RNA sequence: GGGAACGACUCGAGUAGAGUCGAAAACUGAUGCUGGUGAUGCCAGGGGGAGCUGAUCUGCCCUACUGCCGCCAGCUGAAUGGCCGGGGCAACAGCCUUAUCCGCGGCUUUGUGGAGGCUGGGGGUGAGACGAAUACAAGUUCGCUUGUAUUCGUCUAAAAGAAACAACAACAACAAC
Reactivity to 2A3 in 0.01 (KOAc 150mM, MgCl2 10mM, bicine 150mM(pH8.5), 24C), signal-to-noise 2, nucleotides 027 to 126: c020u060g030a060u060g020c020u010g000g000u010g010a140u130g110c090c020a020g010g010g010g000g010a030g030c060u070g070a120u060c040u080g080c010c000c000u160a300c000u030g020c020c000g010c000c010a000g000c000u010g000a010a020u060g010g030c020c030g010g010g000g000c040a090a030c020a150g000c000c000u070u090a130u080c040c030g020c030g030g000c000u070u080u150g030u030g030g040a020g010g040c020u020g010g010g000g020g020u060g090
Reactivity to DMS in 0.01 (KOAc 150mM, MgCl2 10mM, bicine 150mM(pH8.5), 24C), signal-to-noise 5, nucleotides 027 to 126: c050u000g000a180u000g010c000u000g000g020u000g010a170u000g010c100c130a050g020g010g000g010g010a090g010c080u010g000a060u010c230u040g000c000c010c010u000a070c030u000g000c040c030g010c000c000a000g000c020u010g010a100a060u000g000g010c040c040g000g000g010g010c150a080a120c100a040g010c030c030u010u010a100u000c040c060g020c060g010g000c130u000u010u010g000u000g000g010a240g000g000c040u000g010g000g000g010g010u000g000
The data come from the RNA Mapping Database (RMDB), library OK2TST. Chemical mapping of a 177-nucleotide RNA with 2A3 and DMS. For DMS, 6,251 sequencing reads were counted. The RNA was probed in 150 mM KOAc, 10 mM MgCl2 and 150 mM bicine (pH 8.5) at 24 C.